[RMDB]
About this RNA
The data come from the RNA Mapping Database (RMDB), library 15KLIB. This 170-nucleotide RNA was probed chemically with DMS and 2A3.
RNA sequence: GGGAACGACUCGAGUAGAGUCGAAAAUGUCAAACAAGUGUUAGACUUGCUUAAUAAGGGUAUGCAACUUUUGCAUACAAAGGUCUCCUGGGCUGGUUCUAAAAUCAUUGCUGUUAUCUACAGCGGCUAAGAGCCUUGUUCGCAAGGCUCAAAAGAAACAACAACAACAAC
Reactivity to DMS in 0.01 (KOAc 150mM, MgCl2 10mM, bicine 150mM(pH8.5), 24C), signal-to-noise 5, nucleotides 027 to 129: u000g000u020c040a040a040a060c040a100a050g030u000g020u080u040a080g020a070c020u010u000g000c070u060u010a060a060u000a090a000g010g000g000u000a030u030g020c030a030a120c260u070u070u020u000g000c030a020u020a040c030a040a140a060g020g040u000c000u000c020c010u030g010g000g000c000u020g000g020u040u010c090u030a000a020a020a020u070c140a130u000u030g020c040u020g020u030u050a090u040c170u040a050c080a020g050c000g030g020c100u000a030a020
Reactivity to 2A3 in 0.01 (KOAc 150mM, MgCl2 10mM, bicine 150mM(pH8.5), 24C), signal-to-noise 5, nucleotides 027 to 129: u090g010u050c030a010a050a060c030a090a050g050u020g100u140u060a020g040a000c000u000u100g010c020u030u090a050a060u150a130a060g160g000g010u020a000u010g000c000a050a080c030u150u190u270u020g000c010a010u020a010c000a020a040a000g000g000u020c000u030c070c010u050g000g010g000c020u010g020g000u020u060c040u120a040a030a060a080u120c140a040u080u130g000c000u000g010u060u070a090u060c050u040a040c020a000g000c000g020g000c000u050a090a000